Source information:
The record gives the reactivity of an RNA of 177 nucleotides to DMS and 2A3.

RNA sequence: GGGAACGACUCGAGUAGAGUCGAAAAGGGACAAAAAUGGCAUAAGAGAGAUGUACAGGGGUAGGGAAGGGGAAGAGAAAGAUCGAUAUCUACGCCCCUUCUUUUUCUCUUAUGCAUUUUUGUCCCUGCCCUUAAAUGAUUUCGAUCAUUUAAGGGCAAAAGAAACAACAACAACAAC
Reactivity to DMS in 0.01 (KOAc 150mM, MgCl2 10mM, bicine 150mM(pH8.5), 24C), signal-to-noise 2, nucleotides 027 to 126: g040g000g000a040c020a010a000a000a020a000u000g000g030c000a010u000a010a010g000a020g030a010g000a080u030g000u020a020c060a140g030g010g040g030u010a170g060g010g010a010a020g000g060g010g000a060a020g000a040g010a060a070a010g040a100u020c300g000a130u000a090u000c000u000a220c210g000c010c010c020c000u000u000c000u000u000u020u030u000c010u000c000u000u000a000u000g000c010a000u000u020u000u010u000g000u010c000c000c000u000
Reactivity to 2A3 in 0.01 (KOAc 150mM, MgCl2 10mM, bicine 150mM(pH8.5), 24C), signal-to-noise 7, nucleotides 027 to 126: g000g000g000a000c000a000a020a020a010a000u060g270g160c010a000u000a000a010g000a000g010a000g020a030u090g070u140a040c090a080g070g060g050g060u120a080g030g030g030a010a020g010g030g030g010a050a040g080a020g040a080a160a010g070a040u090c090g070a050u060a040u230c010u030a050c060g010c000c000c000c020u010u000c000u020u030u000u020u000c000u000c000u000u000a000u000g000c000a000u000u000u000u000u000g000u000c000c000c000u000
Background:
The 2A3 profile rests on 6,404 reads. For DMS the reverse transcriptase was MarathonRT. It was measured as part of the RMDB library RFM100. For 2A3 the reverse transcriptase was SuperScript II with manganese.